[RMDB]
RNA sequence: GGGAACGACUCGAGUAGAGUCGAAAAGGCCAGGCUAUUGUGGUUGCCGAUCCACCGAAGACCGUCGGUCACCGAGCAAUCGGUUGAAGGUCCGGGAGCAUCCCGGCGACCCACGCAGGAGGACGAGGAAGCUAUUAUGUUUCGACAUAAUAGCUUCAAAAGAAACAACAACAACAAC
Reactivity to 2A3 in 0.01 (KOAc 150mM, MgCl2 10mM, bicine 150mM(pH8.5), 24C), signal-to-noise 4, nucleotides 027 to 126: g050g010c010c020a010g050g010c040u090a080u200u220g050u140g040g040u030u060g020c000c010g000a030u020c020c010a020c020c010g030a090a020g020a030c020c000g060u050c040g040g040u060c020a000c030c010g010a010g030c020a070a140u020c010g010g010u010u080g030a040a020g030g000u020c010c010g010g020g010a050g110c030a130u150c010c060c000g010g000c000g000a020c000c010c000a010c030g030c000a020g000g060a020g020g020a030c050g020a050g160
Reactivity to DMS in 0.01 (KOAc 150mM, MgCl2 10mM, bicine 150mM(pH8.5), 24C), signal-to-noise 9, nucleotides 027 to 126: g010g000c020c020a100g000g010c060u010a090u010u000g030u000g020g000u000u000g010c020c020g000a090u000c070c060a090c040c030g010a100a100g010a040c270c010g010u010c160g020g010u010c110a040c000c010g000a010g000c280a100a120u000c000g010g000u000u000g020a050a090g010g000u000c000c020g000g000g000a190g020c210a110u000c070c060c020g020g000c010g010a020c020c010c040a060c120g010c040a060g000g000a060g000g000a050c080g010a130g020